[RMDB]
This 177-nucleotide RNA was probed chemically with DMS and 2A3. 2A3 adducts were read by reverse transcription with SuperScript II with manganese. The RNA was probed in 150 mM KOAc, 10 mM MgCl2 and 150 mM bicine (pH 8.5) at 24 C.

RNA sequence: GGGAACGACUCGAGUAGAGUCGAAAAACGCCUGAGCUACGGCUCAGGCGAGGAUGAUGACCAAAUAGACUGAAAGAUGAAGAAAUGCACCUCAACUGACUAAAACGCGCCAUUACGAUGGCGCGAAAUGGCUAACAAAAUUCGUUUUGUUAGCCAUAAAAGAAACAACAACAACAAC
Reactivity to DMS in 0.01 (KOAc 150mM, MgCl2 10mM, bicine 150mM(pH8.5), 24C), signal-to-noise 4, nucleotides 027 to 126: a210c020g030c000c000u010g000a000g040c010u000a070c260g020g010c000u000c000a010g010g010c010g030a010g010g010a080u000g000a130u020g000a120c030c030a020a060a080u010a050g020a150c050u020g010a080a070a120g010a090u000g000a120a100g000a070a070a070u020g000c020a030c030c000u020c060a060a060c100u030g000a080c110u010a020a040a090a150c000g000c030g040c000c020a010u010u020a130c200g000a070u000g010g010c020g040c000g000a000a030
Reactivity to 2A3 in 0.01 (KOAc 150mM, MgCl2 10mM, bicine 150mM(pH8.5), 24C), signal-to-noise 6, nucleotides 027 to 126: a000c030g000c000c000u000g000a000g020c000u040a070c290g110g020c000u000c010a000g000g000c010g000a000g000g020a030u080g000a010u150g050a020c030c020a010a000a050u110a040g120a060c130u120g050a060a060a090g110a080u140g070a070a080g060a070a110a040u130g010c000a040c000c010u040c030a060a070c100u120g090a080c020u150a050a040a090a050c010g000c000g000c000c000a000u010u010a040c200g060a010u020g000g000c000g000c000g000a000a000